[RMDB]
RNA sequence: GGGAACGACUCGAGUAGAGUCGAAAAGAUAUGGAAACUAGGGAGAUCCCUCGCAUGGUCGGAAACGACCAUGGACAGAGCGAUCUUUGAUCUAGUUUCCUAAGUCAAAGCUUCGUUCGCGAAGCAACACGAUUAAUUUCUUCGGAAAUUAAUCGUGAAAAGAAACAACAACAACAAC
Reactivity to DMS in 0.01 (KOAc 150mM, MgCl2 10mM, bicine 150mM(pH8.5), 24C), signal-to-noise 4, nucleotides 027 to 126: g020a040u000a300u010g000g010a020a020a010c000u000a010g000g000g000a010g000a020u000c010c130c000u000c000g000c000a010u010g010g020u000c000g010g000a110a130a170c010g000a020c000c000a000u000g000g000a180c020a080g010a020g070c300g010a010u000c000u000u000u010g000a040u000c010u000a010g000u000u000u000c000c000u000a010a090g010u000c030a100a090a090g000c000u000u000c000g000u010u010c180g040c030g010a010a010g030c010a090a130
Reactivity to 2A3 in 0.01 (KOAc 150mM, MgCl2 10mM, bicine 150mM(pH8.5), 24C), signal-to-noise 2, nucleotides 027 to 126: g010a030u110a010u120g000g000a010a010a010c000u000a010g010g040g000a010g000a010u000c020c000c000u010c000g000c000a010u000g010g000u000c000g000g060a090a050a050c030g000a000c000c010a000u000g010g030a010c040a070g010a010g020c020g000a010u000c000u200u130u070g030a020u020c000u000a000g000u000u000u000c000c000u000a050a020g020u010c060a170a070a060g000c010u010u000c010g070u020u150c300g000c020g130a010a000g000c000a020a010
Source information:
An RNA of 177 nucleotides, treated with DMS and 2A3 and read out base by base. For DMS the reverse transcriptase was MarathonRT. The reactions ran in a buffer of 150 mM KOAc, 10 mM MgCl2 and 150 mM bicine (pH 8.5), at 24 C. It was measured as part of the RMDB library TTRDEL. For DMS, 3,487 sequencing reads were counted. The 2A3 profile rests on 6,176 reads.